RNA sequence: GGGAACGACUCGAGUAGAGUCGAAAAGCCGCUAACGCAAUUGCUACCUCUGGCAUAACAAGUAUAUCGGGUAAGGGUUUCUGUUCCGCACACGCAGACGCAGAGUAUCGUUAAGAUGUCCAUAUUGCUACGUCUUCAUGUUCGCAUGAAGACGUAGAAAAGAAACAACAACAACAAC
Reactivity to 2A3 in 0.01 (KOAc 150mM, MgCl2 10mM, bicine 150mM(pH8.5), 24C), signal-to-noise 1, nucleotides 027 to 126: g000c060c060g000c170u150a120a030c060g000c030a010a250u080u090g020c020u020a080c020c000u020c040u010g020g000c000a000u060a230a000c040a060a060g010u010a050u010a030u190c010g070g020g020u020a060a000g060g010g000u060u040u020c020u040g000u060u000c000c030g000c000a020c000a000c070g080c020a010g020a060c010g000c050a000g040a010g170u060a050u060c010g030u000u030a050a020g060a090u040g060u050c000c000a060u090a060u090u160g040
Reactivity to DMS in 0.01 (KOAc 150mM, MgCl2 10mM, bicine 150mM(pH8.5), 24C), signal-to-noise 2, nucleotides 027 to 126: g000c040c080g040c050u000a080a070c100g000c070a100a120u000u000g000c010u000a080c070c040u010c050u010g010g000c050a090u000a070a060c120a090a110g030u010a060u010a080u010c100g050g000g010u010a050a120g010g010g010u000u010u000c040u000g010u000u000c010c010g000c070a030c090a070c080g020c030a070g000a090c110g040c090a020g000a090g010u010a030u000c050g000u000u000a080a090g000a060u000g010u010c010c010a080u000a080u010u010g000
This 177-nucleotide RNA was probed chemically with 2A3 and DMS. It was measured as part of the RMDB library RFMREP.